[RMDB]
Conditions: 150 mM KOAc, 10 mM MgCl2 and 150 mM bicine (pH 8.5), 24 C. This 177-nucleotide RNA was probed chemically with 2A3. For 2A3 the reverse transcriptase was SuperScript II with manganese. Values cover nucleotides 27 to 126.
RNA sequence: GGGAACGACUCGAGUAGAGUCGAAAAACACGCGAUGAAGGAAAGCACUGGACAGGUGCUUGUCCAGACACCAGUAGAGAUAGCCAACUACCUGCUCAACGAGAAGCGCCGUGCAAUUAAUGAGAUCCUACCGCUCCAUCUUCGGAUGGAGCGGUAGAAAAGAAACAACAACAACAAC
Reactivity to 2A3 in 0.01 (KOAc 150mM, MgCl2 10mM, bicine 150mM(pH8.5), 24C), signal-to-noise 1, nucleotides 027 to 126: a010c010a000c030g130c120g110a120u300g050a050a070g000g010a020a000a000g020c020a020c000u020g060g140a030c010a050g000g150u000g000c000u050u000g000u000c020c000a000g030a000c000a030c060c000a000g000u040a010g090a000g000a050u000a000g000c000c000a030a110c000u120a070c020c020u040g000c030u070c010a200a000c060g000a000g030a150a090g020c020g000c000c000g050u070g050c070a110a040u080u190a050a050u240g010a130g000a000u000c000